[RMDB]
RNA sequence: GGGAACGACUCGAGUAGAGUCGAAAACGCUGGGUAUCUCUGACUGCGAGCUUACUGAAGCGCGCACGGUAAGCGAUGAGCAGUCUAGAGCCGAGCCUGUGCUGAAGCGCGCACGGCAACCGAAAGGUGCGAGUAUCCCGAUCUUCGGAUCGGGAAAGACAGUGAUUUAGUUCGCUAAAUCACUGUCAAAAGAAACAACAACAACAAC
Reactivity to DMS in 0.01 (KOAc 150mM, MgCl2 10mM, bicine 150mM(pH8.5), 24C), signal-to-noise 1, nucleotides 027 to 156: c060g060c040u000g010g130g000u010a110u000c020u030c070u000g010a050c020u010g040c000g020a140g000c000u010u010a060c030u000g020a000a080g070c040g050c040g040c010a300c040g000g020u000a030a020g030c020g000a140u000g000a180g000c000a030g010u000c000u000a010g010a030g040c200c100g010a120g030c010c010u010g000u010g020c020u000g000a050a090g000c040g020c040g070c000a300c040g010g000c000a070a150c020c020g000a130a180a140g020g020u000g020c000g000a130g020u000a200u010c000c000c000g000a000u000c020u000u000c300g030g000a020u000c000g070g000g000a000a010a060
Reactivity to 2A3 in 0.01 (KOAc 150mM, MgCl2 10mM, bicine 150mM(pH8.5), 24C), signal-to-noise 4, nucleotides 027 to 156: c020g000c020u050g030g010g020u200a270u070c010u000c010u010g010a010c000u000g000c000g060a050g000c010u010u000a000c000u000g050a190a110g000c000g000c010g000c010a010c030g000g000u030a000a020g000c040g160a300u290g040a060g000c030a000g000u020c050u070a020g000a010g020c050c060g030a050g010c000c010u040g010u020g010c010u050g030a130a040g000c010g000c000g000c020a010c010g000g010c010a030a030c010c010g040a110a040a020g020g000u010g010c020g030a030g060u060a070u060c000c000c000g000a000u000c010u020u070c220g100g000a000u000c000g000g000g010a010a000a000
Source: RMDB library RNAMAK, as collected in RNAgym.
This 207-nucleotide RNA was probed chemically with DMS and 2A3.
The RNA was probed in 150 mM KOAc, 10 mM MgCl2 and 150 mM bicine (pH 8.5) at 24 C.
Reactivities are given for positions 27 through 156.
For 2A3, 4,970 sequencing reads were counted.